An RNA of 207 nucleotides, treated with DMS and 2A3 and read out base by base. For DMS, 8,226 sequencing reads were counted. For 2A3 the reverse transcriptase was SuperScript II with manganese. Values cover nucleotides 27 to 156. The data come from the RNA Mapping Database (RMDB), library M2RFPK.
RNA sequence: GGGAACGACUCGAGUAGAGUCGAAAAAGCCAUACCAUUACGGUGGUAUGGCAAGUCCGUGACGGCGAUGGAUCCCGCCUGGCCGAUGCCGAACUGCCGAUCUGGCUGAUGGUUCCUGCCCCGUCAAAAAACGUAAAGCACUUCGGUGCUUUACGAACUUAAUCAAUUGGUUCGCCAAUUGAUUAAGAAAAGAAACAACAACAACAAC
Reactivity to DMS in 0.01 (KOAc 150mM, MgCl2 10mM, bicine 150mM(pH8.5), 24C), signal-to-noise 2, nucleotides 027 to 156: a150g030c000c000a030u000a010c010c010a050u000u000a080c190g050g010u000g000g030u000a010u010g000g060c000a010a010g010u000c020c040g020u010g000a050c010g000g010c040g030a200u000g000g000a050u000c020c000c050g020c000c010u000g020g020c030c010g000a100u000g010c020c030g020a120a100c090u000g020c040c040g010a110u010c040u000g030g010c010u000g010a150u010g020g000u000u000c000c020u000g000c060c070c020c010g020u010c010a000a020a080a080a070a140c020g030u000a010a010a040g000c000a000c010u010u000c290g060g010u000g000c000u000u000u000a000c000g000a020a050
Reactivity to 2A3 in 0.01 (KOAc 150mM, MgCl2 10mM, bicine 150mM(pH8.5), 24C), signal-to-noise 6, nucleotides 027 to 156: a000g000c000c000a000u000a010c000c000a000u030u050a060c250g140g000u000g000g000u000a000u020g000g000c000a000a010g020u000c010c020g020u030g010a010c000g000g040c120g040a030u080g010g000a020u050c010c010c010g030c020c030u020g000g000c010c020g050a060u130g080c040c040g140a180a120c110u140g030c010c010g060a080u040c050u050g010g010c030u060g030a160u130g030g000u000u020c000c000u040g030c020c000c000c000g000u000c000a050a030a010a010a030a050c000g000u000a000a000a000g000c000a010c010u040u110c230g090g010u000g000c000u000u000u000a000c000g000a000a000